[RMDB]
RNA sequence: GGGAACGACUCGAGUAGAGUCGAAAAGAUGGGGCGACUACUUCCAGCCGAUCCGGUGCUUGCCAUUACUGGGUCAGAGGUGAGCAAGGCGGUCUAUGAUCGCGUCUAUAACGAGCUUGGGCUCGGCCGUGAGUCGCCCAUUCGUGGGCGACUCACGAAAAGAAACAACAACAACAAC
Reactivity to 2A3 in 0.01 (KOAc 150mM, MgCl2 10mM, bicine 150mM(pH8.5), 24C), signal-to-noise 1, nucleotides 027 to 126: g260a170u170g010g000g010g000c000g000a010c010u010a000c000u060u000c000c030a030g020c080c000g000a010u090c000c000g030g010u040g030c000u020u080g040c000c000a050u030u150a140c090u080g060g000g000u130c080a070g000a000g120g000u050g010a020g000c000a000a090g050g000c000g000g010u000c000u000a080u300g000a010u010c000g000c010g010u020c070u030a220u060a130a130c180g010a000g050c030u080u220g020g150g000c000u000c000g070g000c000
Chemical mapping of a 177-nucleotide RNA with 2A3. Conditions: 150 mM KOAc, 10 mM MgCl2 and 150 mM bicine (pH 8.5), 24 C. The 2A3 profile rests on 580 reads.